[RMDB]
RNA sequence: GGGAACGACUCGAGUAGAGUCGAAAAAGCAUCUUUCGAGAUGCUAAAAAACCUUUGUGGCUCGACGAAUUGUCACAGAGAGCGAUCCCAUUGGGACCGCUCGACGAAGUGACAACUAUCGAGCCACUCUGGUAAAAAAGACGCCUUCGGGCGUCAAUCCAUGCCAAUCUUUCGAGAUUGGCAUGGAAAAAGAAACAACAACAACAAC
Reactivity to 2A3 in 0.01 (KOAc 150mM, MgCl2 10mM, bicine 150mM(pH8.5), 24C), signal-to-noise 1, nucleotides 027 to 156: a000g000c010a000u000c000u050u070u190c050g030a020g000a040u000g010c000u070a060a030a000a000a000a000c000c060u000u040u010g000u000g040g000c040u040c010g040a120c120g120a300a300u000u000g010u010c000a010c040a000g120a000g000a000g000c000g000a000u000c110c030c050a170u280u300g010g000g000a000c000c000g030c000u040c030g080a140c050g040a090a000g000u000g000a000c000a000a040c000u080a010u010c000g000a040g140c000c000a000c000u020c000u000g050g030u050a000a000a000a000a000a190g030a000c000g010c030c000u010u170c300g020g000g000c020g030u000c030a000a000